Source information: The record gives the reactivity of an RNA of 177 nucleotides to DMS and 2A3. The reactions ran in a buffer of 150 mM KOAc, 10 mM MgCl2 and 150 mM bicine (pH 8.5), at 24 C. It was measured as part of the RMDB library RFMREP. 2A3 adducts were read by reverse transcription with SuperScript II with manganese.
RNA sequence: GGGAACGACUCGAGUAGAGUCGAAAACAGAGCUCCGUAAAUUCGGAGUUCGCUAUUCGACCACAUGCUCGGAAGGAGGAGAUCAUGGCCGGGCCGGCCUGGGCUGCCGAAGCUCAGCAGCUCUGAACAAUCUUAAGACCUUCGGGUCUUAAGAUUGAAAAGAAACAACAACAACAAC
Reactivity to DMS in 0.01 (KOAc 150mM, MgCl2 10mM, bicine 150mM(pH8.5), 24C), signal-to-noise 1, nucleotides 027 to 126: c150a160g010a000g010c000u000c000c000g000u000a080a070a300u020u010c000g010g000a020g030u000u000c020g000c140u000a140u000u000c020g000a010c010c080a150c100a170u000g000c010u000c000g000g000a050a160g000g000a080g000g000a030g010a100u010c210a070u000g020g010c020c000g000g020g080c300c110g040g000c030c010u010g000g000g000c000u000g000c010c010g010a030a040g000c020u000c000a300g010c050a050g010c020u010c040u000g010a130a210
Reactivity to 2A3 in 0.01 (KOAc 150mM, MgCl2 10mM, bicine 150mM(pH8.5), 24C), signal-to-noise 1, nucleotides 027 to 126: c030a020g010a000g000c010u000c000c000g040u030a190a240a260u300u180c000g000g030a010g000u010u010c000g010c000u130a190u010u030c020g000a020c020c030a060c000a220u140g040c000u000c010g000g000a010a010g030g000a000g000g010a010g000a040u160c090a110u240g000g000c000c060g020g090g170c220c300g030g080c000c000u060g000g020g000c000u000g000c020c010g010a010a020g000c010u000c000a000g000c010a000g000c010u000c050u060g020a060a040